[RMDB]
RNA sequence: GGGAACGACUCGAGUAGAGUCGAAAAACUGGACUGCUACGGCAGUCCAGAGAAUGAAGACGUUCCACCCGAGCGAGUGAUGAGCGAAACGGUUAAUACUGAUGAGUAGCCGGUACGCCGGCUACAAAAUGAACAGGUAAUUCGUUACCUGUUCAUUAAAAGAAACAACAACAACAAC
Reactivity to 2A3 in 0.01 (KOAc 150mM, MgCl2 10mM, bicine 150mM(pH8.5), 24C), signal-to-noise 9, nucleotides 027 to 126: a010c000u000g000g000a000c000u000g010c000u020a070c230g130g000c000a000g000u000c000c000a000g000a000g020a010a040u120g030a060a020g080a020c030g020u040u000c000c010a020c010c010c000g050a050g040c050g020a050g050u090g070a160u060g020a050g020c030g040a070a040a030c040g010g020u050u080a080a050u130a220c060u080g120a130u070g040a070g050u000a000g000c000c000g010g000u020a020c110g030c010c000g000g000c000u000a000c000a000a010
Reactivity to DMS in 0.01 (KOAc 150mM, MgCl2 10mM, bicine 150mM(pH8.5), 24C), signal-to-noise 9, nucleotides 027 to 126: a060c000u000g000g000a010c000u000g020c000u000a100c240g040g000c000a000g000u000c000c000a000g010a020g010a060a050u010g010a130a100g020a170c050g010u010u000c010c010a100c050c020c020g000a090g010c070g000a120g010u010g010a070u020g010a100g010c050g000a070a080a090c070g000g010u000u010a070a090u030a100c070u010g010a100u010g000a180g010u000a010g010c010c000g000g010u000a070c220g010c010c010g000g000c000u000a000c010a010a040
Structure probing data (2A3 and DMS) for a 177-nucleotide construct. DMS (dimethyl sulfate) methylates the pairing face of unpaired adenines and cytosines. Reactivities are given for positions 27 through 126. 2A3 adducts were read by reverse transcription with SuperScript II with manganese.